[RMDB]
RNA sequence: GGGAACGACUCGAGUAGAGUCGAAAAGAUAUGGACAGAGCAAUCGCGAUAAGUCCUCUUCGGAAACGAAGAAGGACUUUUGACGCGAGCUCUGUCCUAAGUCAAAACUGAAUCUUCGGAUUCAGAAGAGGUAUGGUAUGUUCGCAUACCAUACCUCAAAAGAAACAACAACAACAAC
Reactivity to DMS in 0.01 (KOAc 150mM, MgCl2 10mM, bicine 150mM(pH8.5), 24C), signal-to-noise 2, nucleotides 027 to 126: g000a030u010a130u010g020g000a050c010a000g010a040g000c000a140a110u010c020g030c010g010a080u020a020a010g010u010c000c000u000c020u030u000c000g010g000a030a010a060c000g010a000a010g020a100a030g040g000a000c010u000u000u000u000g010a280c090g050c000g010a010g000c000u000c000u000g010u010c000c000u010a000a050g000u000c010a070a080a140a120c010u010g020a020a000u000c000u000u010c200g020g000a030u000u000c000a000g010a100a100
Reactivity to 2A3 in 0.01 (KOAc 150mM, MgCl2 10mM, bicine 150mM(pH8.5), 24C), signal-to-noise 2, nucleotides 027 to 126: g000a000u020a020u080g000g010a020c020a000g010a000g000c040a180a300u210c030g030c010g090a090u070a240a000g010u000c000c010u040c010u030u000c000g000g000a040a010a000c000g010a010a030g050a010a020g010g000a000c010u040u000u020u110g220a090c050g000c010g000a000g010c000u020c000u000g000u000c000c000u000a010a000g000u000c000a000a020a080a110c010u010g000a000a000u020c000u000u100c300g200g010a000u000u000c000a000g020a040a040